RNA sequence: GGGAACGACUCGAGUAGAGUCGAAAAUCGCUAAGCUUCGGCUUAGCGAAAAGUCGCGGCUUGAGGGCGUGUACGGCUGCGCACACACACGACCCUCAUGCCAAAGCAUCGUGUUCGCACGAUGCAAGAAUGUAUGGGCCUUCGGGCCCAUACAUUCAAAAGAAACAACAACAACAAC
Reactivity to 2A3 in 0.01 (KOAc 150mM, MgCl2 10mM, bicine 150mM(pH8.5), 24C), signal-to-noise 1, nucleotides 027 to 126: u030c000g000c000u000a000a000g000c000u030u150c230g110g000c000u010u010a000g000c000g000a010a000a000a000g010u000c030g000c060g070g020c000u010u020g020a010g040g000g050c050g010u010g000u000a040c000g030g000c080u170g120c120g020c070a050c000a000c000a000c000a020c090g300a300c000c020c000u000c010a000u000g010c000c000a000a110a000g000c000a010u010c000g000u000g050u010u070c290g020c050a010c000g010a010u010g030c000a010a000
Reactivity to DMS in 0.01 (KOAc 150mM, MgCl2 10mM, bicine 150mM(pH8.5), 24C), signal-to-noise 1, nucleotides 027 to 126: u010c010g030c000u010a000a030g020c010u000u000c300g040g020c010u000u000a020g000c000g000a000a040a060a100g020u000c090g030c300g010g010c010u000u000g000a020g000g000g020c020g070u020g030u020a060c130g020g000c050u000g040c120g010c030a070c040a150c190a040c030a020c000g000a180c010c000c000u000c010a010u000g010c010c000a030a070a070g010c010a000u010c000g030u000g010u010u020c220g010c020a030c000g010a020u000g000c000a040a040

Chemical mapping of a 177-nucleotide RNA with 2A3 and DMS. Reactivities are given for positions 27 through 126.